RNA sequence: GGGAACGACUCGAGUAGAGUCGAAAAGGUCAAAAGGGAAACUGGUUAAUAUUCCAGUGCCACCGUACAUUGAAAGUCGACGCCUCGGAGCAGCUUGAGCCGGGCAUUCGCCCGGUCGAACCGUCGAUUGAAUUACAGACUUCGGUCUGUAAUUCAAAAAAGAAACAACAACAACAAC
Reactivity to DMS in 0.01 (KOAc 150mM, MgCl2 10mM, bicine 150mM(pH8.5), 24C), signal-to-noise 5, nucleotides 027 to 126: g000g000u010c050a030a040a140a130g000g010g000a080a120a030c010u000g000g000u000u020a130a160u030a160u030u020c000c010a020g000u000g000c160c090a140c030c050g020u010a080c120a110u020u030g000a080a130a090g010u000c010g000a050c020g000c180c030u000c050g010g000a090g000c080a040g000c080u000u010g000a180g010c020c000g010g000g030c030a110u020u050c230g000c040c000c000g030g010u000c030g000a070a100c120c030g000u000c020g000a110
Reactivity to 2A3 in 0.01 (KOAc 150mM, MgCl2 10mM, bicine 150mM(pH8.5), 24C), signal-to-noise 4, nucleotides 027 to 126: g050g010u090c030a000a010a080a070g030g000g030a100a120a020c000u010g020g040u080u100a140a060u100a230u280u070c000c010a000g010u010g020c010c000a020c010c020g060u060a040c020a130u040u170g110a120a050a020g040u030c000g010a020c010g030c000c010u030c060g020g020a050g050c050a000g020c060u090u110g020a020g020c000c000g000g010g010c010a020u160u210c140g000c000c000c000g000g000u010c010g000a010a010c020c010g060u090c020g060a030

An RNA of 177 nucleotides, treated with DMS and 2A3 and read out base by base. Values cover nucleotides 27 to 126. The 2A3 profile rests on 2,753 reads.